RNA sequence: GGGAACGACUCGAGUAGAGUCGAAAAGGGGUCGACGACAUGGCAUUGCUAAGGCUAUGAAGUACCUGAAGCCUCCACGGGUAUGGAGCCUUAACAAUGCCAACAGCGUCGACGGAGGCACCCAAAAACAUGGUCUUCCUUCGGGAAGACCAUGUAAGCUACUAAGCAUGUUCGCAUGCUUAGUAGCAAAAGAAACAACAACAACAAC
Reactivity to 2A3 in 0.01 (KOAc 150mM, MgCl2 10mM, bicine 150mM(pH8.5), 24C), signal-to-noise 3, nucleotides 027 to 156: g040g030g050g060u000c000g000a020c010g000a010c150a300u300g000g000c000a010u000u010g010c000u000a000a020g000g000c000u030a300u300g000a000a000g000u000a000c000c010u040g030a090a010g020c000c000u000c010c000a010c000g000g000g020u000a020u010g000g010a000g000c000c010u000u010a000a000c000a000a010u020g020c030c010a000a000c000a010g000c000g000u000c000g000a000c010g000g000a000g000g010c000a020c000c000c010a040a100a000a000a000c010a000u000g000g020u000c000u000u020c020c020u090u110c300g050g010g010a000a000g000a000c010c000a010u000g000u000a000a000